Structure probing data (2A3 and DMS) for a 177-nucleotide construct. High DMS reactivity at an A or C suggests that its Watson-Crick edge is free. 2A3 adducts were read by reverse transcription with SuperScript II with manganese. Conditions: 150 mM KOAc, 10 mM MgCl2 and 150 mM bicine (pH 8.5), 24 C.
RNA sequence: GGGAACGACUCGAGUAGAGUCGAAAAUGCUGCGGGCAGAUGAAGUGGAUGUGGGUGUCGAUGCCGCCGGCGGUGACGAUCAUGCCUUCGCCGGCGAUGAUCUCGGUGGCGGCGCCGAUAACGAUGUCACCAUGGUAUAGUUCGCUAUACCAUGGUGAAAAGAAACAACAACAACAAC
Reactivity to 2A3 in 0.01 (KOAc 150mM, MgCl2 10mM, bicine 150mM(pH8.5), 24C), signal-to-noise 5, nucleotides 027 to 126: u140g000c040u010g020c010g000g030g000c030a040g040a130u090g050a140a040g040u030g060g030a090u040g020u100g040g080g030u050g000u000c000g030a030u040g010c010c000g000c000c000g010g070c020g020g050u100g060a050c100g010a020u060c020a020u070g010c000c010u110u120c060g040c080c030g000g000c010g010a010u020g010a010u010c020u000c020g120g300u030g000g000c000g000g010c010g000c000c000g000a010u040a050a020c040g040a030u120g040u080
Reactivity to DMS in 0.01 (KOAc 150mM, MgCl2 10mM, bicine 150mM(pH8.5), 24C), signal-to-noise 4, nucleotides 027 to 126: u020g010c070u000g020c090g000g000g000c060a050g000a080u010g000a080a140g020u010g000g010a080u010g010u000g010g000g030u000g000u020c030g000a040u010g000c050c010g000c000c000g010g000c030g000g020u030g020a080c170g010a040u000c060a040u010g010c020c000u000u010c300g020c210c160g000g000c000g010a000u010g000a020u010c000u000c010g000g020u010g010g010c030g010g000c010g000c030c000g010a030u000a020a050c100g000a160u040g000u020